[RMDB]
RNA sequence: GGGAACGACUCGAGUAGAGUCGAAAAAGAACUAGCGAUUGUAAAAGGCUGUUUGCGCUAAGAUAUGGAAUUAGCGCAAAUAGGUCCGUAUUCCUUGAUAACAUUUCGGACAACCGCGCUAAAACAACACUCCCUACAUAUUCGUAUGUAGGGAGUGAAAAGAAACAACAACAACAAC
Reactivity to 2A3 in 0.01 (KOAc 150mM, MgCl2 10mM, bicine 150mM(pH8.5), 24C), signal-to-noise 4, nucleotides 027 to 126: a000g040a030a020c020u010a030g000c010g070a060u070u230g080u200a050a090a050a080g030g010c000u010g010u000u000u010g000c010g000c010u020a020a000g060a170u220a180u300g140g040a060a140u000u010a010g000c000g000c000a000a000a000u010a000g000g020u000c010c010g010u040a050u020u050c020c010u040u100g050a040u070a140a090c050a150u100u110u170c010g000g000a000c000a030a030c040c000g030c000g010c040u050a100a100a000a020c070a030a000
Reactivity to DMS in 0.01 (KOAc 150mM, MgCl2 10mM, bicine 150mM(pH8.5), 24C), signal-to-noise 4, nucleotides 027 to 126: a110g000a120a080c150u010a060g000c000g010a090u010u010g010u010a070a090a120a120g000g000c010u000g000u000u000u000g000c010g000c010u000a000a020g010a150u010a290u020g000g020a060a100u000u000a000g000c000g020c000a010a010a010u000a010g010g010u000c000c000g020u010a140u000u000c020c020u000u010g020a060u000a080a100c150a210u010u000u000c020g010g000a040c010a060a050c050c040g020c020g010c120u000a040a050a050a060c180a040a080